Source information: An RNA of 177 nucleotides, treated with 2A3 and DMS and read out base by base. Source: RMDB library VIROID, as collected in RNAgym. The 2A3 profile rests on 2,841 reads. The RNA was probed in 150 mM KOAc, 10 mM MgCl2 and 150 mM bicine (pH 8.5) at 24 C.
[RMDB]
RNA sequence: GGGAACGACUCGAGUAGAGUCGAAAAUAGGUCGUGAACAAGCCCGGAGUACAUUCCCAAUGGAACUAGGGAACCCCUCCGGUCUUGUCCAACCUCUGUUUCGGCAGAGGAUACCGUGCUCCACGGCGUACUCAGAAAUGUUCGCAUUUCUGAGUACAAAAGAAACAACAACAACAAC
Reactivity to 2A3 in 0.01 (KOAc 150mM, MgCl2 10mM, bicine 150mM(pH8.5), 24C), signal-to-noise 2, nucleotides 027 to 126: u180a070g040g020u060c040g050u080g070a060a000c000a010a000g010c000c020c000g000g000a010g000u090a030c030a080u030u020c040c010c000a010a030u120g140g050a110a080c180u060a190g000g000g000a000a010c050c020c000c010u000c000c000g000g010u010c000u010u000g010u000c010c010a030a050c000c010u000c010u000g040u010u060u100c230g110g000c000a010g000a000g000g040a010u060a010c020c000g040u040g010c020u030c040c020a030c020g040g030c040
Reactivity to DMS in 0.01 (KOAc 150mM, MgCl2 10mM, bicine 150mM(pH8.5), 24C), signal-to-noise 3, nucleotides 027 to 126: u000a130g000g010u000c180g020u000g000a070a030c020a030a020g000c130c000c020g030g010a040g000u000a100c210a300u000u000c000c000c000a030a120u020g000g010a060a060c150u010a280g010g010g010a020a020c090c200c300c010u000c000c010g010g000u010c000u000u000g000u000c030c000a070a230c000c010u000c010u010g010u000u000u010c210g020g000c000a010g000a010g000g000a110u000a020c050c000g010u000g000c090u010c050c050a060c100g010g020c260